[RMDB]
RNA sequence: GGGAACGACUCGAGUAGAGUCGAAAAUGGCAUGCCCGAUCGGCUCGUCGACCAUGGCUUGCCAGGCAGCGGCCGCCUCGUGGCCGCCGUAUUCCACAAUGUCGCGGCGGGCCUGCUCGCGGGUGCGGCACUGGGGACAGUUCGCUGUCCCCAGUGCAAAAGAAACAACAACAACAAC
Reactivity to 2A3 in 0.01 (KOAc 150mM, MgCl2 10mM, bicine 150mM(pH8.5), 24C), signal-to-noise 1, nucleotides 027 to 126: u080g070g000c060a020u080g130c000c000c000g000a080u060c000g020g030c070u010c060g110u040c000g090a050c060c040a090u210g000g010c010u030u000g000c030c010a020g040g000c050a000g010c000g080g000c000c030g000c010c030u130c080g160u300g020g000c000c020g080c010c010g000u040a220u160u020c070c020a030c030a080a060u190g060u110c010g000c030g020g030c000g000g000g010c030c030u050g000c020u000c030g040c000g000g020g000u120g060c050g050
Reactivity to DMS in 0.01 (KOAc 150mM, MgCl2 10mM, bicine 150mM(pH8.5), 24C), signal-to-noise 2, nucleotides 027 to 126: u010g010g010c030a040u010g010c020c000c200g010a060u000c070g010g020c050u000c100g020u000c000g000a090c080c040a120u000g000g000c010u000u000g020c010c010a090g000g010c050a090g010c030g000g030c000c090g000c030c070u010c170g030u000g000g030c000c110g000c010c020g010u000a160u000u000c080c040a110c180a080a060u010g010u000c070g010c030g020g010c010g000g000g000c000c020u010g000c100u000c070g000c050g000g000g010u010g040c010g000
Chemical mapping of a 177-nucleotide RNA with 2A3 and DMS.
Reactivities are given for positions 27 through 126.
Conditions: 150 mM KOAc, 10 mM MgCl2 and 150 mM bicine (pH 8.5), 24 C.
For 2A3, 1,346 sequencing reads were counted.